This 177-nucleotide RNA was probed chemically with DMS. Source: RMDB library OK2TRN, as collected in RNAgym. DMS adducts were read by reverse transcription with MarathonRT. Reactivities are rounded to 0.1 and cut off at 0 and 3. The RNA was probed in 150 mM KOAc, 10 mM MgCl2 and 150 mM bicine (pH 8.5) at 24 C.
RNA sequence: GGGAACGACUCGAGUAGAGUCGAAAAACGGACGAUUAAACGCCCCCACACCAAACAUAUCCGCCCCGUUCCAGCAGAAGGUGUGCCAGUAGCAGGCGGCAAAACGCAAGUGCUCUUCCAUACGCUACUAAAUAGGGGUAUUCGUACCCCUAUUUAGAAAAGAAACAACAACAACAAC
Reactivity to DMS in 0.01 (KOAc 150mM, MgCl2 10mM, bicine 150mM(pH8.5), 24C), signal-to-noise 6, nucleotides 027 to 126: a180c080g000g020a060c050g010a140u010u010a090a150a170c090g010c030c010c000c050c030a070c080a090c090c070a060a090a130c100a060u000a090u000c030c040g010c020c010c020c020g010u000u000c010c020a090g000c100a080g010a080a080g010g010u000g010u000g000c020c010a070g010u010a040g010c060a090g000g010c050g010g010c050a040a020a060a080c070g010c060a030a050g020u000g020c040u000c040u000u000c010c020a090u010a070c120g000c080u010a110